RNA sequence: GGGAACGACUCGAGUAGAGUCGAAAAAGCCACCGAUAUACGUAUCGGUGGCAAGACUGAUACCGGACACGGGCGUUGAGGGAACUCUGCGCCCGUGUCUGCAUGUUAAGGGAAAAAUAAAUGGCAAUAGAGAAAUUACGUUCGCGUAAUUUCUCUAAAAAGAAACAACAACAACAAC
Reactivity to DMS in 0.01 (KOAc 150mM, MgCl2 10mM, bicine 150mM(pH8.5), 24C), signal-to-noise 2, nucleotides 027 to 126: a090g020c000c020a000c000c000g010a000u000a020u010a080c170g090u010a040u000c000g010g000u000g000g000c000a020a000g020a110c010u020g000a160u060a040c210c000g000g000a010c020a000c000g000g040g000c000g030u000u000g010a010g010g000g090a140a200c000u020c000u000g000c000g000c000c000c000g040u000g000u000c010u000g020c110a110u030g040u000u020a080a180g010g020g020a000a090a040a070a100u040a040a030a050u030g000g060c110a060a150